[RMDB]
RNA sequence: GGGAACGACUCGAGUAGAGUCGAAAAGAUAUGGAAGGCGAUGAAACCUUGUGCGACGAAGUCGGAAACGACAGAGCACUGGGUGGAGCCUUCCUAAGUCAAAUCUCGUUUGUUCGCAAACGAGAAACUUAGUAAAAACGUUCGCGUUUUUACUAAGAAAAGAAACAACAACAACAAC
Reactivity to DMS in 0.01 (KOAc 150mM, MgCl2 10mM, bicine 150mM(pH8.5), 24C), signal-to-noise 6, nucleotides 027 to 126: g010a040u000a300u010g000g000a020a010g000g000c000g010a080u010g000a170a150a030c000c000u000u000g010u000g010c010g000a200c240g000a070a100g000u000c010g010g000a090a070a160c000g000a010c010a030g010a200g000c000a010c010u000g000g000g000u000g000g000a100g020c000c000u010u000c000c000u000a010a040g010u000c030a080a120a130u000c010u000c000g000u000u000u000g010u000u010c210g010c000a010a000a000c000g010a010g000a020a020a070
Reactivity to 2A3 in 0.01 (KOAc 150mM, MgCl2 10mM, bicine 150mM(pH8.5), 24C), signal-to-noise 4, nucleotides 027 to 126: g010a020u070a030u110g010g010a000a010g010g030c040g210a300u040g030a040a010a000c000c000u010u040g000u000g030c090g080a300c070g050a300a000g010u010c010g010g020a070a050a020c020g000a000c000a000g030a000g030c000a000c010u020g030g000g000u000g000g010a010g010c000c000u010u000c000c000u000a000a000g000u000c010a040a030a160u010c010u000c020g010u000u020u010g040u040u060c290g000c190a010a000a000c000g000a000g000a010a000a000